[RMDB]
RNA sequence: GGGAACGACUCGAGUAGAGUCGAAAACAAGUGCCAAUGGCACGGACUGCACCAUCUGUGGAUUCGAAGCCACGCUUCAGCUGGUGGUGGCAGUGGAGGGCGAAGGCGGGAGAUGAGCGAAUUCCGAGCUGGGUCAUAGGUUCGCCUAUGACCCAGCAAAAGAAACAACAACAACAAC
Reactivity to DMS in 0.01 (KOAc 150mM, MgCl2 10mM, bicine 150mM(pH8.5), 24C), signal-to-noise 1, nucleotides 027 to 126: c120a170a150g010u000g040c010c000a170a160u010g010g010c000a020c050g000g000a090c030u010g000c010a030c020c000a030u010c010u000g020u010g000g000a140u000u000c290g030a040a110g000c000c110a100c130g010c110u000u000c070a120g000c130u000g020g030u000g020g030u000g030g000c030a020g010u000g000g000a100g000g000g030c130g010a030a090g000g010c100g070g000g010a110g000a100u030g000a050g030c030g080a070a110u000u000c010c020g020a290
Reactivity to 2A3 in 0.01 (KOAc 150mM, MgCl2 10mM, bicine 150mM(pH8.5), 24C), signal-to-noise 1, nucleotides 027 to 126: c070a120a000g030u010g000c000c060a220a300u250g000g000c020a000c010g000g010a000c000u010g000c020a000c000c000a020u030c050u050g050u080g090g070a130u180u200c160g010a080a000g000c060c050a130c120g000c030u060u000c000a010g000c010u050g000g000u030g000g000u030g140g030c000a000g000u040g000g030a060g020g000g030c130g000a040a000g090g020c090g000g090g000a120g000a060u270g080a060g070c050g040a040a110u030u000c030c000g010a080